[RMDB]
RNA sequence: GGGAACGACUCGAGUAGAGUCGAAAAAAUCGAUGGCAAUGUAACUACUUCGAUUGUGGUUGAUUCAGAUAAUUUAACUGGUAAAGCAAAUACUGUAGGUGUUUAUGAAGUUGUAUUCAGAGCCGUAUCCUCUUAUAUUAUUCGUAAUAUAAGAGGAAAAAGAAACAACAACAACAAC
Reactivity to DMS in 0.01 (KOAc 150mM, MgCl2 10mM, bicine 150mM(pH8.5), 24C), signal-to-noise 6, nucleotides 027 to 126: a060a040u030c040g020a040u020g000g010c040a070a100u010g020u010a070a040c060u010a030c030u010u010c030g000a110u010u000g010u010g000g000u010u010g010a070u010u000c060a090g010a090u040a050a050u010u010u020a040a060c020u000g000g020u010a060a060a090g010c100a060a040a020u000a030c040u000g010u020a050g000g000u000g010u000u010u010a110u020g000a030a050g010u000u010g010u000a080u010u000c020a020g000a230g000c020c020g010u010a140
Reactivity to 2A3 in 0.01 (KOAc 150mM, MgCl2 10mM, bicine 150mM(pH8.5), 24C), signal-to-noise 6, nucleotides 027 to 126: a000a030u250c160g010a100u130g000g020c020a040a050u020g020u090a040a030c020u040a010c010u070u020c010g090a110u020u110g050u070g090g120u050u110g020a070u100u050c000a020g050a120u080a160a150u200u130u150a110a050c020u030g120g000u130a060a040a040g040c040a010a060a050u040a090c010u100g100u180a040g040g120u100g080u100u120u070a120u150g020a020a000g010u030u040g010u030a290u080u100c000a000g010a010g070c000c010g000u000a040

An RNA of 177 nucleotides, treated with DMS and 2A3 and read out base by base. Conditions: 150 mM KOAc, 10 mM MgCl2 and 150 mM bicine (pH 8.5), 24 C. For 2A3 the reverse transcriptase was SuperScript II with manganese. The DMS profile rests on 17,668 reads.